[RMDB]
RNA sequence: GGGAACGACUCGAGUAGAGUCGAAAAUACAACGUGCUGCUGAUGCGCGUACCGGAAUCUCUGCGUGUCCUCUGGUCACUACCGGUGCUGGGUGCGUCCCUGUCAACAGCUGCAGCGCUGCUGAUCUCCUUCUCGGUGUAUACGUGCGCGUGUCGCACCAUACCUCUGGCUUCGGCCAGAGGUAUGGAAAAGAAACAACAACAACAAC
Reactivity to DMS in 0.01 (KOAc 150mM, MgCl2 10mM, bicine 150mM(pH8.5), 24C), signal-to-noise 1, nucleotides 027 to 156: u010a040c050a100a090c090g030u010g030c020u020g050c080u000g010a050u000g010c000g010c030g020u010a020c000c050g030g000a100a080u000c000u000c050u000g000c090g000u000g020u000c050c020u000c060u020g050g010u020c050a040c070u000a100c010c080g000g010u000g010c020u010g000g050g030u000g020c060g000u000c020c020c040u020g010u000c010a020a030c010a060g000c030u010g000c130a120g010c110g010c020u000g010c010u000g060a080u000c060u000c020c010u010u000c030u010c010g020g010u000g030u000a110u000a080c080g020u000g000c020g030c000g040u000g000u000c030g010c070a200
Reactivity to 2A3 in 0.01 (KOAc 150mM, MgCl2 10mM, bicine 150mM(pH8.5), 24C), signal-to-noise 4, nucleotides 027 to 156: u220a030c080a110a010c090g080u120g040c030u030g020c000u090g020a060u050g020c020g010c010g010u010a020c020c040g020g070a120a130u080c090u030c090u260g090c050g020u040g040u040c010c040u140c150u190g030g000u050c020a020c050u100a050c020c000g060g000u030g030c030u070g010g020g000u090g050c050g050u120c030c000c000u050g060u080c050a070a050c010a050g020c000u080g050c030a040g040c020g000c080u060g000c020u020g010a070u030c030u070c040c000u120u090c060u050c080g030g000u060g040u040a100u070a080c060g040u040g060c020g000c040g020u070g040u030c010g010c020a030
The data come from the RNA Mapping Database (RMDB), library OK3TST. Structure probing data (DMS and 2A3) for a 207-nucleotide construct. The reactions ran in a buffer of 150 mM KOAc, 10 mM MgCl2 and 150 mM bicine (pH 8.5), at 24 C. For DMS the reverse transcriptase was MarathonRT. Values are in units of 0.01, from 0 to 300, in steps of 10. 2A3 adducts were read by reverse transcription with SuperScript II with manganese.